[RMDB]
RNA sequence: GGGAACGACUCGAGUAGAGUCGAAAAGACCGGGGUGGGCACGAACUGCCACACCGCCUGCCUGCCGAUGCCGUCGGUCGCCGGGUAGGCGGUGCGCAGCACCUCGUGCCGGUCGAGCACGUCGGCACUAGUAUGCCAUCUUCGGAUGGCAUACUAGAAAAGAAACAACAACAACAAC
Reactivity to DMS in 0.01 (KOAc 150mM, MgCl2 10mM, bicine 150mM(pH8.5), 24C), signal-to-noise 6, nucleotides 027 to 126: g020a110c020c010g010g000g010g010u000g010g000g030c010a010c010g010a060a150c030u000g010c030c050a130c010a010c000c000g010c010c000u000g020c000c000u000g010c300c010g010a020u000g020c040c120g010u010c060g020g000u000c010g010c210c000g010g000g030u000a020g000g010c020g000g010u000g010c300g000c040a010g010c130a140c280c150u000c010g000u000g010c010c010g020g000u000c100g010a120g000c040a020c040g000u000c020g030g000c050a300
Reactivity to 2A3 in 0.01 (KOAc 150mM, MgCl2 10mM, bicine 150mM(pH8.5), 24C), signal-to-noise 2, nucleotides 027 to 126: g080a020c000c000g000g000g000g000u140g020g020g030c000a000c010g010a080a040c010u010g030c030c010a060c010a000c010c010g000c000c000u010g020c000c010u030g010c030c010g030a050u100g160c060c140g160u150c090g060g020u040c020g000c050c010g000g000g000u010a010g000g000c020g010g000u000g000c010g000c000a000g020c010a070c010c030u030c010g000u010g000c010c000g010g020u080c050g010a040g000c030a010c130g300u030c000g020g000c030a020